[RMDB]
RNA sequence: GGGAACGACUCGAGUAGAGUCGAAAAUUUCAGCAAUUUGAAUAAAGUGGAAAUGCCCUCUCCAUAGUUAACACUGCAGGGGUCCUUUCCAAUGCAGAAUGGCUUGGUUCUUAGGUUUAGGUAGUAGUACUAAUUGGUAUUUCGAUACCAAUUAGUAAAAAGAAACAACAACAACAAC
Reactivity to DMS in 0.01 (KOAc 150mM, MgCl2 10mM, bicine 150mM(pH8.5), 24C), signal-to-noise 9, nucleotides 027 to 126: u000u010u000c040a080g020c070a090a080u000u010u010g010a110a100u010a060a090a150g020u000g000g010a020a030a040u000g000c090c010c010u000c050u000c060c090a060u010a070g010u000u000a090a120c160a090c060u000g000c170a030g010g000g000g010u000c100c100u000u000u000c010c010a040a070u000g010c070a050g010a080a090u000g000g010c020u000u000g020g010u000u000c050u000u000a070g010g010u000u000u000a050g010g010u000a050g010u000a080g010